[RMDB]
RNA sequence: GGGAACGACUCGAGUAGAGUCGAAAAGGCAGCCCGGCCGAGGAGGACGCGUUCGGCCUGGGGGGACUGGGUGGCCUCACCCCCAACCCGGUCAUCCUCCAGGACUGCAUGUGGAGCGGCUUCUCCGCCCGCGAGAAGCUGGAGCGCGCCGUGAGCGCGGUCUAUCAUGUUUCGACAUGAUAGACCGAAAAGAAACAACAACAACAAC
Reactivity to DMS in 0.01 (KOAc 150mM, MgCl2 10mM, bicine 150mM(pH8.5), 24C), signal-to-noise 2, nucleotides 027 to 156: g020g050c070a100g000c020c020c050g030g080c040c030g000a100g010g000a120g030g020a040c030g010c070g000u000u000c040g020g050c010c000u000g000g030g060g020g000g010a080c020u000g000g010g000u000g020g010c010c050u030c180a300c030c030c050c000c000a130a120c030c000c010g010g010u010c020a080u000c000c000u000c010c020a040g010g000a110c030u000g020c030a100u000g010u000g010g000a190g020c030g020g000c030u000u010c000u010c000c000g000c080c030c050g020c090g060a060g000a030a030g020c010u000g020g010a070g000c000g020c020g000c010c020g020u010g010a100g010c010g020
Reactivity to 2A3 in 0.01 (KOAc 150mM, MgCl2 10mM, bicine 150mM(pH8.5), 24C), signal-to-noise 2, nucleotides 027 to 156: g110g020c000a000g020c020c000c000g000g000c010c010g010a060g020g100a080g010g030a020c010g010c010g020u030u040c030g030g000c010c010u000g000g000g000g000g000g000a000c010u000g000g020g000u010g030g000c060c050u150c080a180c000c020c000c010c000a110a300c000c000c000g010g000u000c010a150u130c000c020u000c010c000a020g010g050a130c000u030g020c040a050u110g040u110g100g020a070g050c010g000g000c000u040u000c000u000c000c010g040c020c060c040g010c110g040a020g000a040a010g000c010u030g000g050a050g030c010g000c010g000c000c000g030u090g040a050g020c090g000